[RMDB]
RNA sequence: GGGAACGACUCGAGUAGAGUCGAAAACGUCGUGAACUAGCGACAAUGCAUUAGGUCCAUCGUUAUCUAACCGAAACAUCGUGACUAGUGUUAGAAUAGAACCAGGAGAGGACGCUGGCAAACAAAGACGCAGUGUAUUAUUCGUAGUACGCUGCGUAAAAGAAACAACAACAACAAC
Reactivity to DMS in 0.01 (KOAc 150mM, MgCl2 10mM, bicine 150mM(pH8.5), 24C), signal-to-noise 9, nucleotides 027 to 126: c170g010u000c020g020u000g000a120a110c160u030a120g010c010g000a030c030a130a090u020g010c030a040u010u020a040g010g000u010c020c020a100u010c090g010u010u010a090u010c020u000a040a040c120c050g000a120a070a070c080a080u020c140g010u020g020a080c060u010a070g010u020g000u000u010a050g000a050a110u020a070g000a070a090c100c100a090g000g000a090g000a090g000g000a020c040g000c010u010g000g000c060a050a070a070c160a060a090a080g010
Reactivity to 2A3 in 0.01 (KOAc 150mM, MgCl2 10mM, bicine 150mM(pH8.5), 24C), signal-to-noise 9, nucleotides 027 to 126: c060g000u000c010g010u030g070a130a090c070u030a060g000c000g010a000c000a010a060u080g000c010a020u020u100a030g020g030u000c020c010a060u030c070g040u030u060a090u070c020u020a020a030c030c010g040a060a040a030c040a080u150c090g090u110g080a050c050u050a050g020u010g000u110u030a020g010a060a060u080a050g060a030a020c030c020a020g010g060a070g010a040g040g010a000c010g000c010u010g000g000c000a020a030a010c040a010a090a010g080
An RNA of 177 nucleotides, treated with DMS and 2A3 and read out base by base. Reactivities are rounded to 0.1 and cut off at 0 and 3. For 2A3, 93,148 sequencing reads were counted. 2A3 adducts were read by reverse transcription with SuperScript II with manganese. Conditions: 150 mM KOAc, 10 mM MgCl2 and 150 mM bicine (pH 8.5), 24 C. Source: RMDB library OK1LIB, as collected in RNAgym.